[RMDB]
RNA sequence: GGGAACGACUCGAGUAGAGUCGAAAAGAGUGAGUGAUCGAGUUCGAUCGAACGAACGAGAACGUGUGAACGAGAUCGUUCGAACGAACGUGUUCACUCUCGAGAACGAGAACACACACACACGAGUUCUCGUGAGUGAGAACGAUCUCGUGUUCUCCUGACCUAACGCUUUCGAGCGUUAGGUCAGAAAAGAAACAACAACAACAAC
Reactivity to 2A3 in 0.01 (KOAc 150mM, MgCl2 10mM, bicine 150mM(pH8.5), 24C), signal-to-noise 2, nucleotides 027 to 156: g110a000g040u130g030a020g010u060g010a040u020c070g000a030g140u010u150c010g040a140u020c090g010a030a030c010g010a040a010c010g000a000g030a050a030c040g100u220g020u130g170a030a030c010g010a000g020a070u020c000g000u010u000c000g010a020a010c010g040a050a050c090g070u110g020u180u030c010a010c010u010c000u000c000g020a010g010a000a000c020g000a020g030a200a010c050a020c030a010c000a000c010a020c000a000c150g050a090g080u030u000c020u010c010g000u000g000a010g000u000g020a080g000a020a000c020g020a020u000c000u000c010g040u040g000u020u000c000u010c000